[RMDB]
RNA sequence: GGGAACGACUCGAGUAGAGUCGAAAAGGAUGGCAUGACAGUAAGAGAAUUAUGCAGUGCUGCCAUAACCAUGAGUGAUAACACUGCGGCCAACUUACUUCUGACAACGAUCGGAGGACCGAAGGAGAUGCACUGCCUGCUUCGGCAGGCAGUGCAUAAAAGAAACAACAACAACAAC
Reactivity to 2A3 in 0.01 (KOAc 150mM, MgCl2 10mM, bicine 150mM(pH8.5), 24C), signal-to-noise 2, nucleotides 027 to 126: g110g040a000u150g000g000c110a110u020g010a150c030a050g000u000a010a000g120a000g250a300a130u140u160a040u300g000c000a000g000u000g140c000u020g000c090c000a010u000a170a060c010c000a040u130g100a000g030u030g170a100u040a090a010c060a000c000u000g000c020g040g030c100c000a040a000c040u070u000a000c000u050u090c060u000g000a070c000a100a070c060g100a180u040c100g020g010a020g000g080a060c000c000g050a030a030g000g060a050g070
Reactivity to DMS in 0.01 (KOAc 150mM, MgCl2 10mM, bicine 150mM(pH8.5), 24C), signal-to-noise 1, nucleotides 027 to 126: g000g010a000u000g010g030c080a110u050g000a010c110a070g010u000a050a000g000a040g000a140a100u000u050a080u140g030c010a000g000u000g080c040u000g020c060c000a080u020a060a090c210c110a170u040g000a090g040u020g050a180u000a140a240c110a000c030u000g020c120g010g010c150c100a090a130c080u010u000a020c000u000u000c000u000g000a020c000a050a090c180g000a120u000c050g000g000a070g000g000a000c040c080g000a060a080g050g000a020g000
Chemical mapping of a 177-nucleotide RNA with 2A3 and DMS.
The data come from the RNA Mapping Database (RMDB), library OK1LIB.
Conditions: 150 mM KOAc, 10 mM MgCl2 and 150 mM bicine (pH 8.5), 24 C.
2A3 adducts were read by reverse transcription with SuperScript II with manganese.